[RMDB]
RNA sequence: GGGAACGACUCGAGUAGAGUCGAAAACGGCGCAGUCGUCAGCAUCGUCGGCGGAGGCGGUGGCGGUGGCGGGGCGGCAGAAAAAGAACACAGUCAGCCCCUCCGGCGCCGCCGUGGACACGCUCAUCAUGGCGGCGCUGGCGGGCGCGAGGUAGAACUAUUUACAUGUAUUCGUACAUGUAAAUAGAAAAGAAACAACAACAACAAC
Reactivity to 2A3 in 0.01 (KOAc 150mM, MgCl2 10mM, bicine 150mM(pH8.5), 24C), signal-to-noise 2, nucleotides 027 to 156: c020g060g000c010g020c050a070g130u160c020g020u010c020a010g020c020a060u060c040g050u020c040g030g050c030g040g060a100g110g000c080g010g020u040g010g070c020g030g300u030g030g040c110g010g010g010g000c040g010g000c050a040g130a030a110a050a020a010g200a070a030c110a010c030a050g080u090c010a030g010c010c010c000c000u010c010c000g010g010c000g000c000c000g000c000c000g000u000g000g010a040c040a040c160g010c030u080c070a200u060c040a030u130g000g000c000g000g030c010g000c000u010g000g000c040g010g000g000c020g000c000g010a040g050g020u110a060g030a060a030

The record gives the reactivity of an RNA of 207 nucleotides to 2A3.
The data come from the RNA Mapping Database (RMDB), library OK3TST.
Conditions: 150 mM KOAc, 10 mM MgCl2 and 150 mM bicine (pH 8.5), 24 C.
For 2A3 the reverse transcriptase was SuperScript II with manganese.